An RNA of 177 nucleotides, treated with DMS and 2A3 and read out base by base. The reactions ran in a buffer of 150 mM KOAc, 10 mM MgCl2 and 150 mM bicine (pH 8.5), at 24 C.
RNA sequence: GGGAACGACUCGAGUAGAGUCGAAAAGAUUGCGCGUCUGACCACGCGCAGGCGAUUAAGGUGCACACUGCCGCGAUGAAAGUAGGACUGCGUAUUGUGUACGGGAACACUACCAGUUUCCUAGAUGCUGAGCUGACUCUUUCGAGAGUCAGCUCAGAAAAGAAACAACAACAACAAC
Reactivity to DMS in 0.01 (KOAc 150mM, MgCl2 10mM, bicine 150mM(pH8.5), 24C), signal-to-noise 1, nucleotides 027 to 126: g000a060u010u000g020c010g000c010g000u000c030u020g020a100c210c150a090c020g000c000g010c000a030g060g000c070g000a100u010u010a100a080g010g030u010g000c060a060c010a080c060u000g000c080c050g030c100g030a140u020g000a090a040a070g090u000a050g000g000a090c030u000g000c160g050u000a040u010u010g040u000g010u000a100c080g030g010g000a030a060c030a020c060u000a030c020c050a060g010u000u010u000c000c030u000a000g030a070u010g000
Reactivity to 2A3 in 0.01 (KOAc 150mM, MgCl2 10mM, bicine 150mM(pH8.5), 24C), signal-to-noise 1, nucleotides 027 to 126: g090a030u000u070g000c040g000c000g020u000c080u090g050a040c000c010a000c010g000c000g000c020a010g000g030c030g010a010u070u180a150a010g100g000u040g040c050a020c040a050c040u060g010c050c040g000c050g030a060u120g070a070a110a020g030u060a050g000g090a050c020u020g010c070g050u060a110u140u140g030u010g020u030a050c070g070g040g020a010a010c000a010c030u010a080c020c030a030g010u040u110u000c000c000u020a050g000a150u120g060
The data come from the RNA Mapping Database (RMDB), library OK2TST.